[RMDB]
RNA sequence: GGGAACGACUCGAGUAGAGUCGAAAAGAAUCACCGUACCUAUUUAGGUUUAAGCUCCAAGAUCGGUGGAUAGCAGCCCUAUCAAUAUCUAGGAGAACUGUGCUAUGUUUAGAAGAUUAGGUAGUCUAUUACACAGCCAUGUUCGCAUGGCUGUGAAUCUGAAUCACUGUUUCGACAGUGAUUCAGAAAAAGAAACAACAACAACAAC
Reactivity to 2A3 in 0.01 (KOAc 150mM, MgCl2 10mM, bicine 150mM(pH8.5), 24C), signal-to-noise 1, nucleotides 027 to 156: g060a000a050u120c040a000c030c000g070u040a010c020c020u010a050u110u170u260a090g070g040u000u070u070a040a030g040c000u000c010c040a000a040g010a060u080c000g030g030u030g000g050a010u040a030g090c080a040g000c010c010c010u040a050u040c020a110a050u070a020u240c010u020a020g020g000a040g060a050a050c040u130g020u020g050c000u040a030u110g040u040u070u030a160g020a170a000g000a070u140u020a050g060g040u020a030g040u020c010u040a040u120u140a060c000a000c000a040g000c000c000a000u000g100u050u020c160g010c140a000u000g000g020c010u000g000u000g000a040a000
Reactivity to DMS in 0.01 (KOAc 150mM, MgCl2 10mM, bicine 150mM(pH8.5), 24C), signal-to-noise 1, nucleotides 027 to 156: g040a160a090u030c000a130c030c000g050u000a070c020c000u010a170u000u000u000a040g000g000u000u000u000a080a220g020c010u000c030c000a070a040g060a060u000c050g040g060u000g000g030a040u000a140g000c040a190g000c120c090c010u000a130u020c030a090a130u000a050u000c030u000a170g030g000a030g010a090a070c030u000g000u030g000c050u000a060u000g010u000u000u010a150g010a110a120g020a120u020u000a010g000g000u020a090g060u010c070u000a150u010u010a210c000a010c000a030g020c010c000a050u000g000u000u030c300g000c000a000u000g000g030c030u000g000u000g010a010a090